[RMDB]
RNA sequence: GGGAACGACUCGAGUAGAGUCGAAAAAGCGUGGCCCUUCCGUCCAGCCUGGGGCAGGCGCGACGGGAGCUGCUUCCGCGUCCCCAUAGCAGGGUGCUCGGGUUCAGGUAGGAGACGCACUGCGCGGGACCUGGAUCUCUUUCGAGAGAUCCAGGUCAAAAGAAACAACAACAACAAC
Reactivity to 2A3 in 0.01 (KOAc 150mM, MgCl2 10mM, bicine 150mM(pH8.5), 24C), signal-to-noise 1, nucleotides 027 to 126: a020g050c010g000u050g010g030c070c020c000u030u020c030c000g000u050c000c010a030g010c000c000u120g120g030g160g270c010a000g020g000c000g040c080g000a000c000g000g000g020a000g020c030u100g000c010u040u020c040c000g020c010g050u030c000c000c000c000a120u110a040g000c050a010g000g000g120u070g030c010u040c030g150g160g040u140u100c090a090g110g060u100a040g060g180a140g020a010c010g030c020a000c070u080g000c020g000c080g070g090
Reactivity to DMS in 0.01 (KOAc 150mM, MgCl2 10mM, bicine 150mM(pH8.5), 24C), signal-to-noise 2, nucleotides 027 to 126: a020g020c040g040u000g020g040c060c300c000u000u000c010c000g010u000c040c050a300g020c040c000u000g030g010g000g000c120a020g020g000c030g000c300g020a040c010g010g000g000a000g030c030u020g030c040u000u000c300c010g010c050g010u030c010c000c020c070a110u010a150g000c000a020g010g000g040u000g010c020u010c070g010g000g000u000u000c060a090g000g010u010a150g000g000a120g000a200c020g010c000a130c050u000g000c030g010c090g000g010

This 177-nucleotide RNA was probed chemically with 2A3 and DMS. Conditions: 150 mM KOAc, 10 mM MgCl2 and 150 mM bicine (pH 8.5), 24 C. Reactivities are given for positions 27 through 126. 2A3 adducts were read by reverse transcription with SuperScript II with manganese. In probing experiments dimethyl sulfate is read out at A N1 and C N3, which are open when not base-paired. The data come from the RNA Mapping Database (RMDB), library OK2TRN.